An RNA of 207 nucleotides, treated with 2A3 and read out base by base. For 2A3 the reverse transcriptase was SuperScript II with manganese. It was measured as part of the RMDB library OK3TST.

RNA sequence: GGGAACGACUCGAGUAGAGUCGAAAACAUGAACCUUAUAAAGGCUGUAUACAUGCUAGGGAAAUACUAAUGCCUUUAGACUUAACUAAUUUCUGAACUUUCCCUCUCACUAUCCUUUUUCUAUGAGAAAUUUGGGCAUAUAAUAUCAAUGUAUAAACUACUCGGUAUCCUUCGGGAUACCGAGUAGAAAAGAAACAACAACAACAAC
Reactivity to 2A3 in 0.01 (KOAc 150mM, MgCl2 10mM, bicine 150mM(pH8.5), 24C), signal-to-noise 1, nucleotides 027 to 156: c090a020u180g050a110a130c020c020u090u150a050u070a040a090a050g050g000c020u090g040u040a020u050a070c070a000u070g000c040u090a070g050g040g000a000a040a200u160a090c050u120a050a160u260g020c020c020u050u000u050a070g030a050c030u130u220a080a130c020u000a050a300u090u240u190c100u050g050a050a020c070u000u020u000c030c000c090u120c020u090c030a030c020u120a070u230c020c000u000u070u030u100u030c020u020a090u100g030a050g050a050a060a090u040u080u120g030g000g010c090a030u070a070u110a270a140u110a090u160c000a000a140u020g110u130a110u130a100a060a000